[RMDB]
RNA sequence: GGGAACGACUCGAGUAGAGUCGAAAAGCCAGCAGCUGGGUGAGGACUGUACAAGGGACUGUAGAAGAAAAAAACAACAACAACAAAACCCCAACCCAUGUGGUCAUGUGCAGGCCACUGGUACCUGAAAGUAAAACCUCUGAUCUUCGUUCAGAAAUGCCAAAAUGAUAUUCGUAUCAUUUUGGCAAAAAGAAACAACAACAACAAC
Reactivity to DMS in 0.01 (KOAc 150mM, MgCl2 10mM, bicine 150mM(pH8.5), 24C), signal-to-noise 1, nucleotides 027 to 156: g100c000c010a100g030c050a040g000c030u000g030g000g000u010g010a110g030g000a060c050u000g030u010a060c050a090a150g000g050g000a190c060u010g020u000a110g000a120a100g000a040a000a020a300a020a050a020c040a040a060c040a010a020c040a000a040c030a020a030a080a120c020c060c030c000a050a130c120c010c010a030u020g030u010g000g000u000c010a100u000g030u000g060c050a100g070g040c010c000a010c000u000g000g010u000a020c010c000u020g010a130a010a100g010u000a030a040a040a090c050c030u000c010u000g020a070u010c070u000u020c030g020u000u010c000a030g000a080a040a210
Reactivity to 2A3 in 0.01 (KOAc 150mM, MgCl2 10mM, bicine 150mM(pH8.5), 24C), signal-to-noise 2, nucleotides 027 to 156: g030c010c010a000g010c000a000g010c030u050g010g000g000u030g030a050g000g020a010c020u040g010u030a020c010a030a030g020g010g010a020c030u050g030u070a030g040a090a020g070a000a000a000a000a000a000a000c000a000a000c000a000a000c000a000a000c000a000a010a060a300c160c110c110c000a020a020c000c000c000a030u210g020u000g040g000u050c090a170u220g010u050g060c130a110g000g000c000c000a000c030u000g000g020u020a020c000c000u040g020a020a110a000g050u050a000a000a040a070c010c000u040c040u020g020a020u060c090u090u020c020g150u110u160c080a010g060a110a200a080
The record gives the reactivity of an RNA of 207 nucleotides to DMS and 2A3. The reactions ran in a buffer of 150 mM KOAc, 10 mM MgCl2 and 150 mM bicine (pH 8.5), at 24 C. The DMS profile rests on 2,534 reads. 2A3 adducts were read by reverse transcription with SuperScript II with manganese.